Background:
The record gives the reactivity of an RNA of 177 nucleotides to 2A3 and DMS. 2A3 adducts were read by reverse transcription with SuperScript II with manganese. It was measured as part of the RMDB library OK1LIB. DMS adducts were read by reverse transcription with MarathonRT. The 2A3 profile rests on 59,738 reads.
[RMDB]
RNA sequence: GGGAACGACUCGAGUAGAGUCGAAAAACAUGAUCGAUAGAUAAUCAGGUCCGCGUCGAUAAGGAGCUUAGGCUUCUUCAGUAGGUUUCUCCGGUCGUGGCUUAGGCUUCCGCUUCAGGAAGUCUGGACGUUAAUGUAAUUUCGAUUACAUUAACGUAAAAGAAACAACAACAACAAC
Reactivity to 2A3 in 0.01 (KOAc 150mM, MgCl2 10mM, bicine 150mM(pH8.5), 24C), signal-to-noise 9, nucleotides 027 to 126: a000c030a040u070g010a020u030c020g050a050u060a120g050a020u140a150a060u130c050a040g060g100u020c020c030g050c050g090u120c040g030a070u050a160a030g010g010a010g000c020u080u120a140g140g030c000u020u000c000u020u010c020a090g040u140a110g090g010u020u040u010c020u000c010c000g000g010u020c010g020u020g040g010c050u070u130a010g000g000c000u000u000c010c010g050c070u210u180c080a030g000g000a010a000g010u000c000u010g030g030
Reactivity to DMS in 0.01 (KOAc 150mM, MgCl2 10mM, bicine 150mM(pH8.5), 24C), signal-to-noise 9, nucleotides 027 to 126: a070c040a030u010g010a020u000c020g010a080u020a030g010a070u030a050a060u010c040a100g020g000u010c030c040g000c070g020u010c070g000a090u020a040a020g000g000a010g010c010u010u050a140g030g010c010u000u000c000u010u000c150a100g010u020a080g000g010u000u000u000c010u000c110c020g010g010u000c020g020u000g000g000c050u010u010a020g010g000c000u000u000c000c010g020c280u030u030c240a090g000g010a010a010g010u000c000u000g010g000